[RMDB]
RNA sequence: GGGAACGACUCGAGUAGAGUCGAAAAGUGGUGAGAGUAAGGCAGUUGUUUUAUUAUCUAUCGUCAACGAGACUCACCAGGUUCAUGUUAAUGUGCUAAGAGUCGGCACGGCAUUGGGCACCGUAACCUCGAGCUAAAUAUUCGUAUUUAGCUCGAGAAAAGAAACAACAACAACAAC
Reactivity to 2A3 in 0.01 (KOAc 150mM, MgCl2 10mM, bicine 150mM(pH8.5), 24C), signal-to-noise 9, nucleotides 027 to 126: g140u060g000g000u010g010a030g010a020g050u150a110a120g110g050c110a080g010u040u040g060u030u110u050u020a170u110u050a080u090c110u050a100u110c050g150u110c030a060a040c070g040a020g040a090c000u010c010a020c000c000a010g000g020u010u050c010a010u030g020u030u120a270a080u210g010u020g030c020u050a140a030g070a060g250u160c080g000g040c040a010c020g000g010c020a040u080u180g040g010g000c040a020c050c020g060u060a030a040c020
Reactivity to DMS in 0.01 (KOAc 150mM, MgCl2 10mM, bicine 150mM(pH8.5), 24C), signal-to-noise 6, nucleotides 027 to 126: g020u000g000g000u010g000a010g010a150g010u030a060a100g010g010c090a120g020u000u000g010u010u000u010u010a070u040u020a070u030c110u000a050u010c090g000u010c070a040a090c100g000a110g000a130c010u000c010a020c020c020a030g000g000u000u000c040a070u000g000u000u010a080a100u030g010u000g030c010u000a080a150g010a100g020u040c100g010g000c020a030c010g000g000c030a030u020u020g000g000g000c030a110c040c030g000u010a060a090c180
Conditions: 150 mM KOAc, 10 mM MgCl2 and 150 mM bicine (pH 8.5), 24 C. Structure probing data (2A3 and DMS) for a 177-nucleotide construct. For DMS, 16,964 sequencing reads were counted.